[RMDB]
RNA sequence: GGGAACGACUCGAGUAGAGUCGAAAAUAAUCAUACUGAUGCUUAGUCGGCUCUUGUGGUUUUGGCUCGAUCAACAAUGUGCCCUGGAAGCCAGUCUUGUGUUUAUGUUCGACCACCAUUUGCAUAAGCUGUAUAACUCCUUCGGGAGUUAUACAGCAAAAGAAACAACAACAACAAC
Reactivity to 2A3 in 0.01 (KOAc 150mM, MgCl2 10mM, bicine 150mM(pH8.5), 24C), signal-to-noise 1, nucleotides 027 to 126: u020a030a020u100c030a000u040a150c030u090g080a030u080g010c000u020u020a010g020u090c010g070g000c040u000c050u040u080g020u090g010g100u000u000u130u040g060g000c010u010c020g030a080u040c060a050a040c030a190a130u280g030u050g090c020c000c000u010g020g080a000a000g010c010c020a000g010u030c020u200u100g020u020g080u060u090u020a030u070g030u120u020c010g030a050c040c000a000c020c020a070u190u110u120g090c040a040u000a070a000
Reactivity to DMS in 0.01 (KOAc 150mM, MgCl2 10mM, bicine 150mM(pH8.5), 24C), signal-to-noise 1, nucleotides 027 to 126: u000a070a080u000c020a030u000a070c070u000g000a040u010g030c080u000u020a150g010u000c160g000g000c000u000c060u000u010g000u010g010g000u020u000u000u000g030g000c010u010c080g030a070u000c060a000a070c150a060a030u000g030u000g010c040c040c000u000g050g030a090a110g020c040c030a090g000u020c180u000u000g000u000g020u020u000u000a030u020g000u000u000c050g010a080c060c050a090c070c030a080u000u000u000g020c040a010u000a040a150